[RMDB]
An RNA of 177 nucleotides, treated with 2A3 and DMS and read out base by base. DMS (dimethyl sulfate) methylates the pairing face of unpaired adenines and cytosines. The RNA was probed in 150 mM KOAc, 10 mM MgCl2 and 150 mM bicine (pH 8.5) at 24 C. It was measured as part of the RMDB library TTRDEL. For DMS the reverse transcriptase was MarathonRT.
RNA sequence: GGGAACGACUCGAGUAGAGUCGAAAAGAUAUGGAUCCAUCCACACCCACGAUGAAAUCGGAAACGAUGGAGUGGUUGUGUGGAGUGGAUCCUAAGUCAAACAACCUAGACUUCGGUCUAGGUUGAACGAAUCUAGUAACUUCGGUUACUAGAUUCGAAAAGAAACAACAACAACAAC
Reactivity to 2A3 in 0.01 (KOAc 150mM, MgCl2 10mM, bicine 150mM(pH8.5), 24C), signal-to-noise 5, nucleotides 027 to 126: g020a020u080a040u140g000g000a010u010c000c000a010u010c000c000a000c010a000c000c020c000a000c010g110a300u090g010a030a020a010u010c000g020g030a090a040a030c010g000a010u020g000g030a010g010u010g000g060u220u300g010u020g010u010g000g020a010g020u050g010g000a000u000c000c000u000a010a000g020u020c020a110a060a110c000a010a000c010c010u000a000g010a000c000u040u090c300g100g000u000c000u000a000g000g000u000u000g000a010a000
Reactivity to DMS in 0.01 (KOAc 150mM, MgCl2 10mM, bicine 150mM(pH8.5), 24C), signal-to-noise 6, nucleotides 027 to 126: g010a040u000a300u010g000g010a000u000c000c000a070u000c000c000a000c000a000c010c010c000a010c000g000a110u010g000a060a110a010u000c000g010g000a160a120a230c000g010a010u000g000g000a060g020u000g000g010u010u000g040u010g020u000g010g000a010g020u000g020g000a010u010c000c000u000a010a070g010u010c030a130a130a260c010a010a010c000c000u000a010g010a020c000u000u010c190g020g010u000c000u000a000g000g000u000u000g010a020a120